The record gives the reactivity of an RNA of 177 nucleotides to 2A3 and DMS.
The reactions ran in a buffer of 150 mM KOAc, 10 mM MgCl2 and 150 mM bicine (pH 8.5), at 24 C.
RNA sequence: GGGAACGACUCGAGUAGAGUCGAAAAACGGGUACGAUACAGUCGAAGAGGCUCGUGUUGUUUUCCGAGUAGCGGACCACGGAGGCCCGGAGUCUGCGCAGGGCCAGCCAGUAAGCACGCACCAGUAACCAUACAAAUCCUUCGGGAUUUGUAUGGUAAAAGAAACAACAACAACAAC
Reactivity to 2A3 in 0.01 (KOAc 150mM, MgCl2 10mM, bicine 150mM(pH8.5), 24C), signal-to-noise 5, nucleotides 027 to 126: a000c020g000g020g060u110a020c010g000a020u020a080c030a030g060u030c000g040a100a030g040a060g130g010c000u010c070g030u040g010u010u030g020u020u090u060u040c000c010g010a050g030u070a040g020c040g010g010a040c020c040a060c140g030g020a040g040g030c030c000c000g010g010a030g070u060c080u110g050c070g000c070a040g010g020g000c010c010a010g040c000c000a010g030u060a060a030g020c050a010c050g010c010a010c000c000a000g050u080a060
Reactivity to DMS in 0.01 (KOAc 150mM, MgCl2 10mM, bicine 150mM(pH8.5), 24C), signal-to-noise 4, nucleotides 027 to 126: a080c020g000g000g010u010a040c010g000a070u020a020c040a040g000u000c020g000a110a120g000a200g000g010c010u000c130g040u000g000u000u000g000u010u020u000u020c010c010g020a170g010u010a090g000c020g010g000a040c100c080a110c130g000g010a300g000g000c050c010c010g000g030a180g000u020c010u000g000c020g010c050a190g000g010g000c020c020a120g000c020c010a070g000u010a040a080g000c050a090c040g000c050a090c070c060a070g020u040a120
Reactivities are rounded to 0.1 and cut off at 0 and 3. DMS adducts were read by reverse transcription with MarathonRT.